[RMDB]
RNA sequence: GGGAACGACUCGAGUAGAGUCGAAAAGAAUCUAACUCAAGGUGGUUUAAAUAGUAUGAAAUAUAACAGGAAACUGCUGAGCAUAAAUACCGCACCUGUUACUGGAAACCAGUCUUCAGCUUGGUUGCACUACGUAUAAAUUCGUUUAUACGUAGUGAAAAGAAACAACAACAACAAC
Reactivity to DMS in 0.01 (KOAc 150mM, MgCl2 10mM, bicine 150mM(pH8.5), 24C), signal-to-noise 9, nucleotides 027 to 126: g000a080a050u010c030u010a050a070c030u010c090a050a040g010g000u000g010g010u000u000u010a080a080a100u010a080g010u000a090u000g000a100a100a110u010a100u010a030a050c010a030g000g000a180a090a090c300u000g010c030u000g010a120g020c070a110u000a060a070a080u010a060c070c050g010c040a090c040c010u000g010u010u000a040c090u000g010g010a060a040a040c030c010a030g010u000c040u000u000c160a040g010c050u000u010g010g010u000u000g000
Reactivity to 2A3 in 0.01 (KOAc 150mM, MgCl2 10mM, bicine 150mM(pH8.5), 24C), signal-to-noise 5, nucleotides 027 to 126: g010a020a020u000c020u040a020a060c000u000c050a010a010g040g020u020g000g020u030u050u090a100a170a090u090a050g050u040a080u180g040a030a110a030u210a040u050a070a040c020a010g040g020a130a120a050c060u030g040c030u070g030a020g050c020a040u100a170a180a020u120a150c020c020g000c000a020c000c000u000g010u030u030a030c020u030g040g040a020a040a030c000c010a040g060u030c020u030u030c020a030g030c050u040u070g050g010u030u100g000
Chemical mapping of a 177-nucleotide RNA with DMS and 2A3. For 2A3 the reverse transcriptase was SuperScript II with manganese. Values cover nucleotides 27 to 126.